[RMDB]
RNA sequence: GGGAACGACUCGAGUAGAGUCGAAAAUGAAUUCGUCCUUGGCUUCGUCCAGGGCUGUCUCGGGAUCGCCGGCAUCGGCCAGGCGCUCUUUCAGCUUCAGGCCUUCGACAUAGGUCGUGUCGUCGAACUGAACCGGAAGUUUCGACUUCCGGUUCAGAAAAGAAACAACAACAACAAC
Reactivity to DMS in 0.01 (KOAc 150mM, MgCl2 10mM, bicine 150mM(pH8.5), 24C), signal-to-noise 1, nucleotides 027 to 126: u000g000a080a130u000u000c180g010u020c000c020u000u020g020g010c000u010u010c300g010u020c020c000a040g000g000g020c040u020g000u010c040u000c120g040g010g010a070u000c020g030c040c000g010g010c040a160u010c230g020g030c000c010a070g040g010c150g020c110u000c020u000u030u020c110a070g010c100u000u000c060a060g010g020c170c040u000u010c060g000a030c020a010u000a110g020g000u000c040g000u000g000u000c010g020u020c020g020a090a190